The record gives the reactivity of an RNA of 177 nucleotides to DMS and 2A3. For 2A3, 9,688 sequencing reads were counted. The RNA was probed in 150 mM KOAc, 10 mM MgCl2 and 150 mM bicine (pH 8.5) at 24 C. The data come from the RNA Mapping Database (RMDB), library OK1LIB. Reactivities are rounded to 0.1 and cut off at 0 and 3.
[RMDB]
RNA sequence: GGGAACGACUCGAGUAGAGUCGAAAAGGUCGUUGCGCUUCCAGGCCGGGUCGCUGGACGGACCCCACAUGCUGUUGGCGUUGUAACCGCCCGAGUCGUUCAUCGCCAGGCCGAUCAGCGUCGGCCAUAGCUGCAAACAAUUCGUUGUUUGCAGCUAAAAAGAAACAACAACAACAAC
Reactivity to DMS in 0.01 (KOAc 150mM, MgCl2 10mM, bicine 150mM(pH8.5), 24C), signal-to-noise 3, nucleotides 027 to 126: g010g000u000c030g010u020u010g010c060g010c020u020u020c060c090a130g010g020c020c050g030g000g010u010c020g000c020u000g000g010a030c030g000g000a120c040c010c040c020a150c200a100u050g000c100u000g000u010u000g000g000c120g000u000u020g010u000a090a080c120c060g020c010c010c010g020a040g000u000c000g020u000u000c010a060u010c020g000c050c070a110g000g020c000c020g000a080u020c080a060g000c090g000u010c030g000g010c000c010a080
Reactivity to 2A3 in 0.01 (KOAc 150mM, MgCl2 10mM, bicine 150mM(pH8.5), 24C), signal-to-noise 7, nucleotides 027 to 126: g050g010u060c040g060u090u120g020c020g020c020u060u040c040c040a040g010g030c010c010g020g020g000u110c030g020c070u040g010g040a060c020g050g050a060c000c010c040c000a100c020a090u240g040c030u060g030u170u080g020g010c020g000u020u090g100u160a060a080c030c000g000c000c010c000g000a000g010u000c010g000u010u000c010a060u070c060g050c040c010a050g000g000c010c000g020a040u050c070a010g010c000g030u020c010g010g000c000c000a010